RNA sequence: GGGAACGACUCGAGUAGAGUCGAAAAUGAUUAAGAGAAAGAUGUAUAUUCCCACUGGGUGGCGAGGACAUAGAUGUCCAGGCCCAUGUGUUCCACGGCAUAAUGUGGGGACUGCAGAGAGGAAGGGCGAUCUACUGCAUUUCGAUGCAGUAGAUCGAAAAGAAACAACAACAACAAC
Reactivity to 2A3 in 0.01 (KOAc 150mM, MgCl2 10mM, bicine 150mM(pH8.5), 24C), signal-to-noise 2, nucleotides 027 to 126: u140g020a000u110u120a080a040g070a040g070a160a130a060g100a050u100g060u160a090u030a050u160u070c000c000c000a010c030u080g030g040g010u110g070g180c020g090a130g020g000a010c000a030u220a050g260a230u190g020u050c000c020a000g080g000c000c000c020a030u110g050u020g020u050u000c080c020a080c030g000g000c040a050u030a200a150u300g010u050g020g000g030g000a000c030u070g000c010a000g040a000g000a000g080g000a030a030g000g000g000
Reactivity to DMS in 0.01 (KOAc 150mM, MgCl2 10mM, bicine 150mM(pH8.5), 24C), signal-to-noise 2, nucleotides 027 to 126: u010g000a150u010u010a100a090g010a110g000a090a100a120g010a050u000g010u000a080u000a160u000u010c010c030c010a140c100u000g000g010g010u010g010g000c030g010a220g040g000a020c020a090u000a130g000a100u020g020u000c010c000a100g030g000c020c020c040a100u010g020u000g010u000u000c020c020a090c080g000g010c040a060u000a030a050u010g040u010g000g000g000g000a050c040u000g000c040a050g020a080g010a090g020g000a050a050g000g010g000
Source information
This 177-nucleotide RNA was probed chemically with 2A3 and DMS. The RNA was probed in 150 mM KOAc, 10 mM MgCl2 and 150 mM bicine (pH 8.5) at 24 C.